Chemical mapping of a 177-nucleotide RNA with 2A3 and DMS. In probing experiments dimethyl sulfate is read out at A N1 and C N3, which are open when not base-paired. Source: RMDB library TTRDEL, as collected in RNAgym.

RNA sequence: GGGAACGACUCGAGUAGAGUCGAAAAGAUAUGGACUGUGUAGGUGCGUAGGCUACCCACCUCGGAAACGAGAGGCCUACUCUCAUCCUACCAGUCCUAAGUCAAAAGUUCGUGUUCGCACGAACAACUUCUAUUCCAUGUUCGCAUGGAAUAGAAGAAAAGAAACAACAACAACAAC
Reactivity to 2A3 in 0.01 (KOAc 150mM, MgCl2 10mM, bicine 150mM(pH8.5), 24C), signal-to-noise 7, nucleotides 027 to 126: g040a020u090a060u160g010g010a000c010u010g060u060g000u300a010g000g030u040g020c050g010u010a000g010g000c010u080a150c070c080c040a080c040c000u010c000g010g040a060a070a040c010g000a010g000a020g050g000c000c010u010a020c000u000c010u000c020a130u150c000c000u000a000c000c010a000g000u000c000c000u000a020a010g040u010c040a030a020a050a150g000u000u010c020g000u010g050u050u100c300g030c090a000c000g000a000a000c010a000a010
Reactivity to DMS in 0.01 (KOAc 150mM, MgCl2 10mM, bicine 150mM(pH8.5), 24C), signal-to-noise 8, nucleotides 027 to 126: g020a030u010a300u010g010g000a010c000u000g010u030g020u000a010g010g020u000g020c300g000u000a000g000g010c000u000a060c050c050c140a300c120c010u000c010g000g000a140a070a180c020g000a010g010a110g000g000c010c000u000a000c000u000c100u000c100a060u010c000c000u000a000c000c000a000g010u000c000c000u000a010a050g000u010c040a100a080a110a100g010u000u000c000g030u000g000u000u010c190g020c010a010c010g000a010a000c010a080a130

The reactions ran in a buffer of 150 mM KOAc, 10 mM MgCl2 and 150 mM bicine (pH 8.5), at 24 C.